[RMDB]
RNA sequence: GGGAACGACUCGAGUAGAGUCGAAAAUCCUAAGUCUAGGCAAGUCCACUGAUGAGCGAUAAGAAACAUCGGAAACGAUGUUUCUUUUGACGCUCGUAGGUGGAUGAUGACCCUAGAUAUGGAAAAAGUGUUCAGUGUGUUCGCACACUGAACACAACAACUCUAACCUGUUCGCAGGUUAGAGUUGAAAAGAAACAACAACAACAAC
Reactivity to 2A3 in 0.01 (KOAc 150mM, MgCl2 10mM, bicine 150mM(pH8.5), 24C), signal-to-noise 3, nucleotides 027 to 156: u020c000c000u030a120a020g020u010c000u000a000g010g010c030a060a210g010u000c010c010a010c020u060g080a160u140g010a120g000c020g030a040u010a070a000g010a000a000a010c000a000u000c000g040g060a110a050a070c010g010a000u000g010u000u000u000c000u000u010u000u020g010a020c000g000c000u000c000g020u000a010g000g010u010g000g000a000u000g000a000u000g000a000c000c000c020u000a000g000a000u050a050u060g050g020a090a060a020a050a090g000u000g000u000u010c000a000g000u000g010u000g030u030u130c190g050c130a000c000a000c000u010g000a000a000c000a000c000a010a020
Reactivity to DMS in 0.01 (KOAc 150mM, MgCl2 10mM, bicine 150mM(pH8.5), 24C), signal-to-noise 3, nucleotides 027 to 156: u000c010c000u000a070a300g020u010c010u000a000g000g040c000a070a190g010u000c000c000a000c000u000g010a180u000g000a020g010c010g010a220u000a010a020g000a020a030a020c000a010u010c010g000g010a150a160a230c020g020a010u000g010u010u000u000c000u020u000u000u020g020a300c100g020c000u010c000g050u020a070g010g010u030g010g030a000u010g010a080u000g000a100c300c010c020u000a020g010a040u010a270u020g020g000a050a070a130a110a150g020u000g000u000u010c000a030g000u000g040u000g000u020u010c300g020c030a020c020a000c000u000g000a000a010c000a010c000a030a120